RNA sequence: GGGAACGACUCGAGUAGAGUCGAAAAGUGGAUUGCUUGAGCCCAGAAGUUUUAAGACCAGCUUGGGCAACAAAGUGCAACCCUGUCUCUACAAAAAAUUUAAAAAUUAGCCGGACAUGGUGGUGUGCACCUGUACUCCUAGCUGCUUGGGAGGCUGUCGGCUUACCUAAUUCGUUAGGUAAGCCGAAAAAGAAACAACAACAACAAC
Reactivity to 2A3 in 0.01 (KOAc 150mM, MgCl2 10mM, bicine 150mM(pH8.5), 24C), signal-to-noise 1, nucleotides 027 to 156: g180u070g010g100a140u040u120g010c010u010u060g050a020g050c010c010c010a000g170a070a020g020u220u210u250u300a060a030g010a000c010c010a010g020c010u040u040g000g060g020c010a000a000c080a030a130a000g020u010g030c000a000a000c000c000c000u000g000u000c000u010c000u040a060c050a000a110a000a060a060a110u300u290u300a050a150a070a160a050u020u020a030g070c100c000g010g010a020c000a100u110g060g040u060g060g020u080g060u020g040c000a060c000c000u020g050u040a110c020u000c000c000u010a040g020c050u000g000c080u180u060g000g000g040a010g000g010c040u070g030
The record gives the reactivity of an RNA of 207 nucleotides to 2A3. Values cover nucleotides 27 to 156. For 2A3 the reverse transcriptase was SuperScript II with manganese.